[RMDB]
RNA sequence: GGGAACGACUCGAGUAGAGUCGAAAACUCACUAACUUCGGUUAGUGAGAAAUAAAUUCAGCGGUUUUAAUUUCGAGGGCAUAACCGCUGAUGCCCUCGAAAAAAGCAUUCCCUUCGGGGAAUGCAACGAUGUAGCUUUGUUCGCAAAGCUACAUCGAAAAGAAACAACAACAACAAC
Reactivity to 2A3 in 0.01 (KOAc 150mM, MgCl2 10mM, bicine 150mM(pH8.5), 24C), signal-to-noise 1, nucleotides 027 to 126: c000u000c010a010c000u010a000a000c000u030u050c120g070g030u000u010a000g000u020g010a000g000a020a000a000u020a000a010a020u110u070c020a030g060c050g070g070u070u050u130u270a100a070u010u140u080c020g020a010g000g000g010c040a020u030a030a060c010c000g040c010u000g000a010u050g020c000c020c020u000c010g040a020a010a000a000a010a000g030c010a010u000u010c000c000c000u000u030c230g030g000g010g020a000a000u010g010c000a000a010
Reactivity to DMS in 0.01 (KOAc 150mM, MgCl2 10mM, bicine 150mM(pH8.5), 24C), signal-to-noise 1, nucleotides 027 to 126: c000u000c000a000c010u010a000a000c000u000u030c220g050g000u000u000a000g000u000g010a010g020a010a060a050u000a020a080a100u000u000c040a050g000c050g000g010u000u000u000u000a010a200u000u000u000c000g050a020g030g000g020c010a000u000a080a080c060c020g000c050u010g000a010u000g000c010c000c000u000c010g000a000a020a040a040a060a070g010c000a000u000u000c000c000c000u000u030c170g000g010g020g020a000a010u000g020c000a030a010
The data come from the RNA Mapping Database (RMDB), library M2PK50.
Chemical mapping of a 177-nucleotide RNA with 2A3 and DMS.
2A3 adducts were read by reverse transcription with SuperScript II with manganese.